Overview:
The record gives the reactivity of an RNA of 177 nucleotides to 2A3 and DMS. It was measured as part of the RMDB library 15KREP. For 2A3 the reverse transcriptase was SuperScript II with manganese.
[RMDB]
RNA sequence: GGGAACGACUCGAGUAGAGUCGAAAAUGGCUCUCCCUUAGCCAUCCGAGUGGACGUUGUCCUCCUUCGGAUGCCCAGGUCGGACCGCGAGGAGGUGGAGAUGCCAUGCCGACCCGAAGAGGAAAGACCUUAUGUGAUCGUUCGCGAUCACAUAAGGAAAAGAAACAACAACAACAAC
Reactivity to 2A3 in 0.01 (KOAc 150mM, MgCl2 10mM, bicine 150mM(pH8.5), 24C), signal-to-noise 1, nucleotides 027 to 126: u020g000g010c010u000c020u000c000c000c000u050u120a040g030c010c000a010u020c030c030g030a050g050u070g000g030a030c170g170u110u230g040u090c000c000u010c000c010u060u020c030g000g010a010u030g000c020c000c000a030g010g060u060c040g060g040a100c040c000g070c050g070a070g020g030a040g000g020u120g000g000a010g010a040u210g020c000c000a000u000g040c040c020g040a050c000c030c010g050a060a030g060a010g000g130a050a030a000g100a040
Reactivity to DMS in 0.01 (KOAc 150mM, MgCl2 10mM, bicine 150mM(pH8.5), 24C), signal-to-noise 2, nucleotides 027 to 126: u000g040g020c000u000c000u000c010c000c050u030u000a120g010c240c020a030u000c000c020g000a040g000u000g000g010a000c040g020u000u000g020u000c040c040u000c050c090u020u010c020g000g000a090u010g000c050c030c030a110g010g020u000c040g000g000a300c020c010g020c140g000a130g000g000a120g010g000u030g020g000a040g010a000u000g050c020c020a040u000g000c210c030g000a090c000c000c010g000a060a030g000a090g010g010a080a110a060g010a170